Chemical mapping of a 177-nucleotide RNA with DMS and 2A3.
For 2A3 the reverse transcriptase was SuperScript II with manganese.

[RMDB]
RNA sequence: GGGAACGACUCGAGUAGAGUCGAAAAUUCUAAGGAACACAACAUUGAUUAAUCUCAUUUUUGGAUCUCGUGGCAAGGCCUCUGUGCUUGCGCAUGCCUUGCCACACAGUGUCAUUGGGCUUACACUGUGAAGUAAAACUUUCGAGUUUUACUUCACAAAAGAAACAACAACAACAAC
Reactivity to DMS in 0.01 (KOAc 150mM, MgCl2 10mM, bicine 150mM(pH8.5), 24C), signal-to-noise 5, nucleotides 027 to 126: u000u010c020u000a090a090g000g000a060a060c060a080c210a070a050c050a070u010u010g000a070u010u000a080a070u020c140u020c040a070u010u010u000u020u010g020g000a040u000c070u000c120g030u000g020g000c000a000a000g000g010c000c010u000c010u000g000u000g000c010u020u010g020c010g000c010a010u020g000c000c010u000u010g010c010c010a000c010a020c130a030g020u010g010u000c050a130u010u000g010g000g010c100u010u000a070c140a070c130u010
Reactivity to 2A3 in 0.01 (KOAc 150mM, MgCl2 10mM, bicine 150mM(pH8.5), 24C), signal-to-noise 6, nucleotides 027 to 126: u050u000c020u060a070a060g100g020a100a040c050a010c010a130a040c020a080u050u110g040a030u150u140a100a080u040c050u020c090a090u050u050u090u140u150g070g010a040u030c030u030c140g000u000g000g010c000a000a000g000g000c000c010u000c000u010g010u000g010c040u130u110g010c020g000c000a000u110g000c000c000u000u000g000c000c000a000c000a000c010a000g010u010g000u010c020a030u020u110g060g010g010c010u020u020a010c070a010c060u030